[RMDB]
The record gives the reactivity of an RNA of 207 nucleotides to 2A3. The reactions ran in a buffer of 150 mM KOAc, 10 mM MgCl2 and 150 mM bicine (pH 8.5), at 24 C.
RNA sequence: GGGAACGACUCGAGUAGAGUCGAAAAACGCUGGGAGGAGUCUCUAGCGUGUGUCUUGGAUUUACAGGAAGCGUACUGAAGCGCGCACGGUACGCCCUGUUGUCAGACAUCGGGCUCCUCCUGUGCUGAAGCGCGCACGGCAACCGAAAGGUGCGAAGCCAUUGUUUCUCUUCGGAGAAACAAUGGCAAAAGAAACAACAACAACAAC
Reactivity to 2A3 in 0.01 (KOAc 150mM, MgCl2 10mM, bicine 150mM(pH8.5), 24C), signal-to-noise 3, nucleotides 027 to 156: a000c090g000c010u010g000g000g000a010g000g000a010g060u000c010u000c080u300a210g110c090g080u220g020u010g000u000c060u110u190g160g130a220u300u300u280a160c000a020g030g100a300a090g030c000g000u010a000c010u030g080a200a110g000c000g010c000g030c070a040c010g010g000u010a020c000g000c020c000c000u060g020u070u040g040u010c040a010g000a000c000a030u040c070g020g000g000c000u000c000c000u000c000c000u000g000u040g000c040u070g000a060a030g000c010g030c020g000c030a010c010g060g010c030a070a080c010c000g110a130a030a020g000g000u020g010c030g020a040a010